[RMDB]
RNA sequence: GGGAACGACUCGAGUAGAGUCGAAAACUGCGGGUACUGCGAGUGAACAGCACCACAUCCAGCCCCGUCUCCAUACGCUUAAUGGUGUAGCUAAUGGCGGAAGUGGUUAAACCCAACUCUUCUGCGGACCUUUAACUUUAUUCGUAAAGUUAAAGGUAAAAGAAACAACAACAACAAC
Reactivity to DMS in 0.01 (KOAc 150mM, MgCl2 10mM, bicine 150mM(pH8.5), 24C), signal-to-noise 9, nucleotides 027 to 126: c130u010g010c050g000g000g010u000a080c020u010g010c120g010a090g010u000g010a110a080c080a110g010c090a090c050c010a040c030a100u000c040c030a050g020c300c000c030c020g010u000c040u000c040c030a070u000a060c090g010c060u000u000a060a100u000g010g010u000g010u000a030g010c130u010a110a090u010g010g010c010g010g010a020a020g010u000g000g000u000u000a040a110a130c040c020c020a110a060c040u000c020u000u000c010u000g010c050g020g010
Reactivity to 2A3 in 0.01 (KOAc 150mM, MgCl2 10mM, bicine 150mM(pH8.5), 24C), signal-to-noise 8, nucleotides 027 to 126: c030u040g000c020g020g020g000u120a140c010u020g030c070g040a020g020u030g040a130a020c030a080g080c030a030c050c000a010c010a180u000c010c000a010g020c000c010c000c010g020u020c020u000c030c020a050u040a060c050g020c060u090u160a090a030u220g040g000u050g020u040a020g010c050u110a120a050u080g130g000c010g010g020a010a010g030u130g050g010u050u070a090a110a060c000c000c000a020a040c010u010c000u050u000c010u030g020c030g070g070

An RNA of 177 nucleotides, treated with DMS and 2A3 and read out base by base. The 2A3 profile rests on 17,455 reads. It was measured as part of the RMDB library OK2TST. Values cover nucleotides 27 to 126. 2A3 is a SHAPE reagent: it acylates the 2'-hydroxyl of flexible nucleotides of all four kinds.